RNA sequence: GGGAACGACUCGAGUAGAGUCGAAAAUUUAUUAAAUUUCCUGAAGUAGUAUUUGAAAGUACACUUAGGAUUACUAGAACUCUGUCAACUCAGUACUGCCGGUUCGGUAGUUGUGAGUAUGCACAAGCCAGUCCGCCGUUCGCGGCGGACAAAAGAAACAACAACAACAAC
Reactivity to DMS in 0.01 (KOAc 150mM, MgCl2 10mM, bicine 150mM(pH8.5), 24C), signal-to-noise 2, nucleotides 027 to 129: u000u050u020a150u020u030a060a020a100u000u140u000c000c020u000g010a050a060g000u050a170g100u000a000u000u030u060g040a150a080a180g110u000a000c070a000c000u040u000a060g010g000a090u070u000a050c130u240a020g010a090a170c050u050c000u000g040u020c070a000a000c000u040c020a010g060u000a020c000u000g030c000c000g070g030u020u000c120g020g090u010a010g000u000u000g020u030g030a040g050u000a050u000g000c170a050c060a090a200g020c060c020a090
Reactivity to 2A3 in 0.01 (KOAc 150mM, MgCl2 10mM, bicine 150mM(pH8.5), 24C), signal-to-noise 2, nucleotides 027 to 129: u010u000u010a100u000u070a040a030a030u080u060u050c000c000u010g060a000a000g040u070a000g000u010a100u110u000u170g110a020a050a010g030u030a000c060a060c000u010u000a000g000g050a000u030u140a000c020u040a000g190a100a010c000u000c010u090g000u020c000a000a000c000u000c000a000g010u010a000c000u000g120c040c030g180g000u090u300c050g070g050u150a010g000u060u010g300u000g030a030g000u000a280u000g010c090a000c010a000a000g180c110c000a000
Conditions: 150 mM KOAc, 10 mM MgCl2 and 150 mM bicine (pH 8.5), 24 C. Chemical mapping of a 170-nucleotide RNA with DMS and 2A3. For 2A3 the reverse transcriptase was SuperScript II with manganese. It was measured as part of the RMDB library 15KLIB. High 2A3 reactivity points to a flexible backbone, as in loops and unpaired stretches. For DMS the reverse transcriptase was MarathonRT.